[RMDB]
RNA sequence: GGGAACGACUCGAGUAGAGUCGAAAAGAAAACUGCGGUAAAGAAGCGAACCAAAAGCUCGGCCAAGAAAAGGCCGAGCAAAGGUGCGCAAAGAACGAGCCGCAAUCGUUCAAGAAAGAAAAGAAAACACCAUAUUAUCAUUCGUGAUAAUAUGGUGAAAAGAAACAACAACAACAAC
Reactivity to DMS in 0.01 (KOAc 150mM, MgCl2 10mM, bicine 150mM(pH8.5), 24C), signal-to-noise 3, nucleotides 027 to 126: g040a090a050a110a060c110u010g000c000g020g010u030a060a150a110g000a260a160g030c000g000a060a030c000c000a030a150a130a170g010c000u010c000g000g000c000c000a110a140g060a130a090a120a080g010g000c010c010g000a050g000c000a000a000a080g000g010u000g010c000g000c020a030a110a040g010a030a040c040g000a140g020c020c000g000c020a020a070u000c050g000u010u000c010a090a040g020a110a080a160g030a070a080a060a070g000a090a000a110a170
Reactivity to 2A3 in 0.01 (KOAc 150mM, MgCl2 10mM, bicine 150mM(pH8.5), 24C), signal-to-noise 5, nucleotides 027 to 126: g070a010a130a000a010c090u040g000c010g000g090u150a130a100a110g070a110a030g010c000g020a010a000c010c000a000a140a050a000g000c000u020c000g000g000c000c000a070a030g160a190a170a030a040g010g000c000c000g010a000g000c000a000a000a000g010g000u010g000c000g000c020a080a060a020g020a030a000c030g010a020g060c010c010g000c000a000a030u000c010g010u020u030c050a050a030g110a110a110a000g150a040a090a070a010g140a010a120a000a000